The data come from the RNA Mapping Database (RMDB), library OK2TST. The record gives the reactivity of an RNA of 177 nucleotides to 2A3 and DMS. Reactivities are given for positions 27 through 126.
RNA sequence: GGGAACGACUCGAGUAGAGUCGAAAAUUGUUUCAAAAGCCAUUCAGAAGAAUCCAAACAUAUCAAGACCCUUAUACACCUAAACAAGAUCCUUAGGACCCAAAAACUUUCUUCUUGGUCUGAGCAAAUGUUAACAAGUAUUCGUACUUGUUAACAUAAAAGAAACAACAACAACAAC
Reactivity to 2A3 in 0.01 (KOAc 150mM, MgCl2 10mM, bicine 150mM(pH8.5), 24C), signal-to-noise 3, nucleotides 027 to 126: u040u020g010u010u010u020c030a050a060a040a030g010c000c010a000u040u060c020a050g010a090a010g010a070a040u030c020c020a050a080a040c030a040u140a020u080c000a020a070g060a130c010c010c000u060u050a060u020a050c060a030c020c010u050a050a050a010c040a060a040g020a100u050c000c020u030u030a030g030g060a070c030c010c010a000a050a060a030a080c020u080u090u070c020u070u000c000u020u060g090g010u030c020u020g020a040g060c020a010a100
Reactivity to DMS in 0.01 (KOAc 150mM, MgCl2 10mM, bicine 150mM(pH8.5), 24C), signal-to-noise 6, nucleotides 027 to 126: u010u010g020u000u010u000c030a080a100a150a200g020c010c010a030u000u000c060a040g010a110a070g000a070a050u010c060c060a040a080a140c090a050u000a030u000c060a070a090g000a090c030c020c040u000u010a050u010a070c100a060c030c030u000a030a040a100c090a080a100g010a070u000c050c030u000u000a090g020g000a140c030c020c060a010a040a030a080a080c140u010u000u010c030u000u000c050u000u000g010g020u000c060u000g010a070g000c100a050a070
2A3 adducts were read by reverse transcription with SuperScript II with manganese.